[RMDB]
Source: RMDB library OK1LIB, as collected in RNAgym.
Chemical mapping of a 177-nucleotide RNA with DMS and 2A3.
For DMS the reverse transcriptase was MarathonRT.
The 2A3 profile rests on 6,112 reads.

RNA sequence: GGGAACGACUCGAGUAGAGUCGAAAAGACGACCAUCGGCCGCGAGAUGCUGCUCGCGACCCGCGAGUACGUCCACGCGCGCUGGGCGGCCUUCGAACAGCUCCUGGCCGAUUUCCCGGAGGCGGCCCAUCUCGGGAAUGUUCGCAUUCCCGAGAUGAAAAGAAACAACAACAACAAC
Reactivity to DMS in 0.01 (KOAc 150mM, MgCl2 10mM, bicine 150mM(pH8.5), 24C), signal-to-noise 3, nucleotides 027 to 126: g000a100c040g000a090c060c020a030u010c080g010g000c040c000g000c030g000a300g000a050u020g010c180u000g020c000u000c000g000c020g000a120c190c150c090g010c000g010a000g010u000a030c000g010u000c020c030a020c050g010c000g000c080g010c060u000g000g000g010c020g040g010c030c010u010u000c010g030a060a120c120a120g010c020u010c020c060u020g000g010c010c010g010a180u020u000u010c000c030c000g000g000a020g000g000c020g000g000c000c010
Reactivity to 2A3 in 0.01 (KOAc 150mM, MgCl2 10mM, bicine 150mM(pH8.5), 24C), signal-to-noise 5, nucleotides 027 to 126: g050a010c040g030a070c000c030a070u070c010g030g010c020c050g010c030g030a020g000a030u080g010c180u020g000c000u040c000g060c020g160a300c030c030c030g000c010g000a020g010u040a020c010g000u010c030c020a130c040g020c010g010c020g000c010u020g020g010g010c020g050g010c010c010u010u050c030g080a110a050c020a050g010c020u020c020c040u050g030g000c010c010g040a080u040u030u040c000c000c000g000g010a020g010g000c030g030g010c000c000